Annotation: Source: RMDB library OK1LIB, as collected in RNAgym. An RNA of 177 nucleotides, treated with 2A3 and read out base by base. Values are in units of 0.01, from 0 to 300, in steps of 10.
[RMDB]
RNA sequence: GGGAACGACUCGAGUAGAGUCGAAAAGACGCGUUCGAGCGGAUCGGCAGGUUCCUCAGCUCAUCCGGCGCGGGAACGGGCUGGUCGGCAAUCUUCGAGGACUUGUCCCGGCGCUCGCGUCCGGCGCUGUUGGUGGUGGCUUCGGCCACCACCAACAAAAAGAAACAACAACAACAAC
Reactivity to 2A3 in 0.01 (KOAc 150mM, MgCl2 10mM, bicine 150mM(pH8.5), 24C), signal-to-noise 2, nucleotides 027 to 126: g020a010c000g000c000g070u060u010c060g070a150g000c070g000g010a110u090c070g060g040c000a000g020g020u000u110c010c000u070c040a070g000c000u000c000a190u110c020c000g000g000c000g000c000g030g060g000a040a040c000g080g000g000c000u000g020g000u000c040g100g100c200a130a300u160c090u300u270c080g120a060g000g150a000c000u000u010g150u240c000c000c000g000g010c030g000c000u010c000g000c000g070u080c000c000g000g050c060g040c000
Conditions: 150 mM KOAc, 10 mM MgCl2 and 150 mM bicine (pH 8.5), 24 C.